[RMDB]
Structure probing data (DMS and 2A3) for a 177-nucleotide construct. For DMS the reverse transcriptase was MarathonRT. The data come from the RNA Mapping Database (RMDB), library TTRDES. The RNA was probed in 150 mM KOAc, 10 mM MgCl2 and 150 mM bicine (pH 8.5) at 24 C.
RNA sequence: GGGAACGACUCGAGUAGAGUCGAAAAGAUAUGGAAUCAUCCUCGCUGGCGAAGAACGCUCGUCGGAAACGACGAGCGGGAGCCAGGAGGAGUGAUUCCUAAGUCAAAACUGGGCUUCGGCCCAGAACUGGUCUUAUAUCUUCGGAUAUAAGACCAGAAAAGAAACAACAACAACAAC
Reactivity to DMS in 0.01 (KOAc 150mM, MgCl2 10mM, bicine 150mM(pH8.5), 24C), signal-to-noise 1, nucleotides 027 to 126: g000a050u000a300u000g000g010a000a010u000c010a100u010c010c010u010c010g040c010u010g010g010c000g000a120a250g000a120a260c000g000c000u000c000g030u010c000g000g000a020a120a240c010g050a060c000g030a070g060c000g000g000g000a100g030c000c000a000g000g000a020g010g020a050g010u000g000a000u000u000c000c000u000a010a100g000u010c060a150a050a120a250c000u000g000g010g010c000u000u020c220g050g000c000c000c010a000g010a040a080
Reactivity to 2A3 in 0.01 (KOAc 150mM, MgCl2 10mM, bicine 150mM(pH8.5), 24C), signal-to-noise 2, nucleotides 027 to 126: g040a030u120a100u220g000g010a000a010u010c000a040u050c000c000u010c020g300c180u000g040g000c020g170a300a000g030a110a000c000g000c010u000c010g090u000c020g080g030a110a110a110c010g000a010c010g100a000g040c000g020g000g000a000g000c000c000a000g000g000a000g030g010a010g010u050g000a000u010u070c000c000u020a090a030g030u020c000a000a000a190a260c010u010g000g000g020c040u130u140c300g230g000c030c000c000a000g010a010a010